An RNA of 177 nucleotides, treated with 2A3 and DMS and read out base by base. For 2A3 the reverse transcriptase was SuperScript II with manganese. DMS adducts were read by reverse transcription with MarathonRT. The data come from the RNA Mapping Database (RMDB), library OK1LIB. The 2A3 profile rests on 903 reads. Conditions: 150 mM KOAc, 10 mM MgCl2 and 150 mM bicine (pH 8.5), 24 C.

[RMDB]
RNA sequence: GGGAACGACUCGAGUAGAGUCGAAAACCCGCGGUUCAGAAGCUGAUUGCUGAGGGGAAGAUUGACGCGCCGGUUACAUAUACCCAGUGGAUUGGCAAAAAGACCGUGCGCUACCUAAUCAUGAAGGGCACUAGUUCUACUUCGGUAGAACUAGUGCAAAAGAAACAACAACAACAAC
Reactivity to 2A3 in 0.01 (KOAc 150mM, MgCl2 10mM, bicine 150mM(pH8.5), 24C), signal-to-noise 2, nucleotides 027 to 126: c010c000c000g000c080g000g070u080u120c020a050g010a160a030g010c030u010g150a120u090u220g020c010u040g030a150g000g010g070g030a000a100g000a080u000u210g070a060c010g000c000g030c010c010g000g000u030u030a050c010a080u130a020u130a070c000c000c020a010g020u170g130g160a160u130u070g000g000c000a000a000a000a110a110g020a000c000c000g050u110g070c000g000c010u050a080c010c030u030a020a040u040c010a000u160g110a070a090g040g000
Reactivity to DMS in 0.01 (KOAc 150mM, MgCl2 10mM, bicine 150mM(pH8.5), 24C), signal-to-noise 1, nucleotides 027 to 126: c000c000c000g030c080g020g020u010u090c090a010g010a100a060g000c030u010g030a070u040u010g000c010u000g000a270g000g010g010g040a140a070g000a140u020u010g050a110c080g010c000g000c000c060g000g000u030u000a090c200a010u010a100u090a180c180c000c000a020g000u000g000g020a060u010u010g010g000c060a070a010a210a110a200g000a000c000c000g010u000g000c040g000c000u060a030c120c000u010a030a040u060c010a080u000g050a110a080g000g000